Structure probing data (2A3) for a 207-nucleotide construct.

RNA sequence: GGGAACGACUCGAGUAGAGUCGAAAACAGAUAAGAAAAGACCGAGAGGUUCAAGCUUAUAGGGCAGAAUGCGGGGGACAGCAGUACUAAACAUUCCCUGUGGCUGAGACGAAGGUAGUACUCCAACAAAACGAGUACUAGUUCGCUAGUACUCGAAUCUGUUGAAGUUGUUCGCAACUUCAACAGAAAAAGAAACAACAACAACAAC
Reactivity to 2A3 in 0.01 (KOAc 150mM, MgCl2 10mM, bicine 150mM(pH8.5), 24C), signal-to-noise 1, nucleotides 027 to 156: c020a000g070a070u230a200a050g030a060a180a050a000g000a000c070c010g000a060g000a030g110g040u110u120c060a000a050g020c000u090u060a040u100a080g000g000g000c000a030g050a070a110u060g050c040g020g010g000g030g000a000c000a030g020c010a010g010u080a020c010u140a060a110a020c040a000u050u040c000c000c010u010g020u060g000g000c020u040g020a010g010a040c000g060a040a020g020g000u000a000g020u000a040c040u000c010c010a000a040c020a030a190a000a040c050g010a000g000u000a000c000u010a000g020u000u010c040g000c150u000a000g010u000a050c000u000c010g000a000a040

The data come from the RNA Mapping Database (RMDB), library M2RFPK.